Notes: Structure probing data (2A3 and DMS) for a 207-nucleotide construct.

RNA sequence: GGGAACGACUCGAGUAGAGUCGAAAACGUAUGCGGAUUCGCUCCGUGAAAAUAUGGCCGCAGGAAUCAAUGGCCGGCGUACGAUAUCCCGGGAUGCGCUCGACAGGAUGCGUCAGGAGCUUGGGAAAUCGUUGGAUUCGGGUAUCAUUGAUGCAGCUAUGUCCUAACGAUUCGUCGUUAGGACAUAAAAAGAAACAACAACAACAAC
Reactivity to 2A3 in 0.01 (KOAc 150mM, MgCl2 10mM, bicine 150mM(pH8.5), 24C), signal-to-noise 5, nucleotides 027 to 156: c050g060u100a060u150g000c000g000g010a040u080u100c140g070c180u000c020c000g030u020g020a070a020a020a040u180a080u120g030g010c050c030g030c060a040g040g210a070a020u030c010a010a010u020g090g050c000c000g000g000c010g010u070a000c000g000a000u010a020u020c010c000c000g000g030g000a060u100g000c010g000c020u030c030g110a150c080a110g180g070a120u200g030c020g040u070c040a030g060g180a080g050c000u060u080g000g000g000a010a020a010u000c000g000u000u020g150g040a200u090u030c000g000g000g040u090a070u180c000a000u000u010g000a000u040g010c010a020g040c000
Reactivity to DMS in 0.01 (KOAc 150mM, MgCl2 10mM, bicine 150mM(pH8.5), 24C), signal-to-noise 3, nucleotides 027 to 156: c070g020u000a100u010g010c000g010g020a110u000u010c290g040c060u010c010c000g010u000g000a090a040a090a140u010a060u000g010g020c040c010g030c030a170g020g010a210a070u000c030a060a060u020g000g020c010c020g030g010c030g020u010a020c030g020a070u020a110u000c010c010c000g000g010g000a160u000g030c040g030c000u000c030g010a100c060a210g050g020a140u000g010c110g020u000c010a090g010g000a080g030c040u010u000g030g000g020a050a150a010u000c010g020u000u000g030g010a270u000u000c010g020g020g050u000a050u000c040a120u000u000g010a060u000g020c020a110g010c050
The RNA was probed in 150 mM KOAc, 10 mM MgCl2 and 150 mM bicine (pH 8.5) at 24 C.